Conditions: 150 mM KOAc, 10 mM MgCl2 and 150 mM bicine (pH 8.5), 24 C. The record gives the reactivity of an RNA of 177 nucleotides to DMS and 2A3. The data come from the RNA Mapping Database (RMDB), library TTRDES. 2A3 adducts were read by reverse transcription with SuperScript II with manganese. The 2A3 profile rests on 8,384 reads.
RNA sequence: GGGAACGACUCGAGUAGAGUCGAAAAGAUAUGGAUGCAGGUCAGCCGAAGAACACUGUCGGAAACGACAGUGGGAGGCUACCUCGCAUCCUAAGUCAAAGUUCCGGUAGGUUCGCCUACCGGAACAUCAAACGAUAUCCUUCGGGAUAUCGUUUGAAAAAGAAACAACAACAACAAC
Reactivity to DMS in 0.01 (KOAc 150mM, MgCl2 10mM, bicine 150mM(pH8.5), 24C), signal-to-noise 5, nucleotides 027 to 126: g010a080u010a300u000g000g000a010u000g010c010a010g000g030u010c280a000g050c000c000g000a120a180g010a170a220c000a000c000u000g000u000c010g000g000a120a060a200c010g000a000c010a000g000u010g000g000g000a040g000g010c010u000a020c000c010u000c300g040c000a000u010c000c000u000a010a060g010u000c040a100a160a160g000u000u000c000c000g010g000u000a010g000g010u000u010c260g010c010c000u000a000c000c000g010g000a000a000c020a070
Reactivity to 2A3 in 0.01 (KOAc 150mM, MgCl2 10mM, bicine 150mM(pH8.5), 24C), signal-to-noise 1, nucleotides 027 to 126: g010a020u070a030u120g010g020a000u000g000c000a000g130g020u300c300a010g020c020c000g260a300a010g000a010a010c000a000c010u000g000u010c020g010g020a110a060a030c010g000a000c000a000g000u010g000g000g010a010g000g000c000u000a000c000c000u000c000g000c000a000u000c000c000u000a020a000g010u000c020a190a080a140g000u000u010c010c010g000g000u010a010g030g040u050u090c300g080c120c000u000a000c000c000g000g000a000a000c000a000